An RNA of 177 nucleotides, treated with DMS and 2A3 and read out base by base. For DMS, 1,341 sequencing reads were counted. The reactions ran in a buffer of 150 mM KOAc, 10 mM MgCl2 and 150 mM bicine (pH 8.5), at 24 C. DMS adducts were read by reverse transcription with MarathonRT.
RNA sequence: GGGAACGACUCGAGUAGAGUCGAAAAGAUAUGGAUACCUUUGAUCUGUACAGCGUUUGACGUCGGAAACGACCGAGCUGAACAGGGAGGUAUCCUAAGUCAAAACACUCAGGUUCGCCUGAGUGAAGAUAGUGGAUCACUUCGGUGAUCCACUAUCAAAAGAAACAACAACAACAAC
Reactivity to DMS in 0.01 (KOAc 150mM, MgCl2 10mM, bicine 150mM(pH8.5), 24C), signal-to-noise 2, nucleotides 027 to 126: g010a040u000a300u010g000g000a020u000a000c000c010u000u000u020g010a030u020c020u000g000u000a040c000a040g000c000g030u000u020u000g000a130c300g000u000c020g020g020a090a110a120c000g000a010c000c020g010a140g000c010u000g000a070a030c000a020g000g000g010a040g010g000u000a000u000c000c000u000a010a060g000u000c040a110a060a160a210c010a000c000u000c000a030g000g000u000u010c200g020c000c000u010g000a010g000u000g000a010a010
Reactivity to 2A3 in 0.01 (KOAc 150mM, MgCl2 10mM, bicine 150mM(pH8.5), 24C), signal-to-noise 2, nucleotides 027 to 126: g040a020u100a000u090g000g000a010u010a000c000c000u180u170u190g080a080u100c000u000g010u020a060c000a010g030c030g100u100u300u300g150a070c010g000u000c010g030g050a100a050a050c020g000a020c000c010g030a000g000c000u020g010a060a000c020a010g000g000g010a010g040g000u000a000u000c000c000u000a040a000g010u030c030a000a030a080a080c000a000c020u020c010a010g070g040u050u110c230g090c070c010u000g010a000g010u010g000a010a020